[RMDB]
RNA sequence: GGGAACGACUCGAGUAGAGUCGAAAAGACGUAAUCCGCGCAAAUCCACAAACGCCAACGAUGAGCGUUUCGCUGUAGCCGCUUAAGGCAACAGCCGGGGCCGCCUGAGCCCUGUUCCCAAAGACGGGAAACUCGAUGCCAUUCGUGGCAUCGAGAAAGUAGCCAUCAGUUUCGACUGAUGGCUACUAAAAGAAACAACAACAACAAC
Reactivity to 2A3 in 0.01 (KOAc 150mM, MgCl2 10mM, bicine 150mM(pH8.5), 24C), signal-to-noise 1, nucleotides 027 to 156: g020a000c020g010u000a020a020u020c020c000g000c010g020c080a120a080a060u130c120c070a120c050a160a140a030c170g000c020c010a110a040c110g040a040u040g030a050g250c000g000u030u050u000c010g000c000u000g010u060a050g000c010c010g100c230u240u300a080a110g000g000c010a020a010c000a000g000c000c040g000g000g000g000c010c150g050c010c010u040g020a030g000c010c000c000u000g010u000u010c000c000c000a000a000a000g020a000c010g000g020g000a080a000a000c000u000c010g020a000u000g000c000c000a020u020u050c260g040u080g010g000c000a000u000c000g000a000g000a000a000